[RMDB]
Chemical mapping of a 177-nucleotide RNA with DMS and 2A3.
DMS adducts were read by reverse transcription with MarathonRT.
The RNA was probed in 150 mM KOAc, 10 mM MgCl2 and 150 mM bicine (pH 8.5) at 24 C.

RNA sequence: GGGAACGACUCGAGUAGAGUCGAAAACAGAUUUUAUCGCUUGGCAAAUGAGUGUGCUCAGGUGCUAAGCGAAUAUGUUCUAUGUGGUGGUGGUUACUACGUCAAACCUGGAGGUACCAGUAGCGGAGCUAACGUUCAAGUUCGCUUGAACGUUAGCAAAAGAAACAACAACAACAAC
Reactivity to DMS in 0.01 (KOAc 150mM, MgCl2 10mM, bicine 150mM(pH8.5), 24C), signal-to-noise 3, nucleotides 027 to 126: c050a070g000a120u000u010u010u000a090u010c010g000c010u010u000g010g020c020a000a030a020u000g000a020g010u010g020u020g030c020u000c000a010g000g030u000g000c000u000a000a010g000c010g010a010a040u000a050u010g010u000u000c050u010a110u010g020u000g020g000u010g010g020u000g010g010u000u000a060c050u010a060c100g000u010c100a050a070a090c080c030u000g010g000a110g020g010u010a090c050c020a050g010u000a080g020c080g000g010a190
Reactivity to 2A3 in 0.01 (KOAc 150mM, MgCl2 10mM, bicine 150mM(pH8.5), 24C), signal-to-noise 3, nucleotides 027 to 126: c020a020g080a070u100u070u040u160a080u050c020g000c000u020u000g010g000c010a010a000a010u000g000a000g000u240g060u240g150c010u000c000a000g020g000u000g000c000u020a000a010g020c000g000a000a000u000a000u000g040u020u030c050u020a100u120g050u050g040g010u000g010g000u000g030g000u030u020a040c020u020a030c020g030u060c070a050a040a080c000c010u000g010g060a060g100g020u060a050c010c020a020g030u060a010g070c090g000g050a020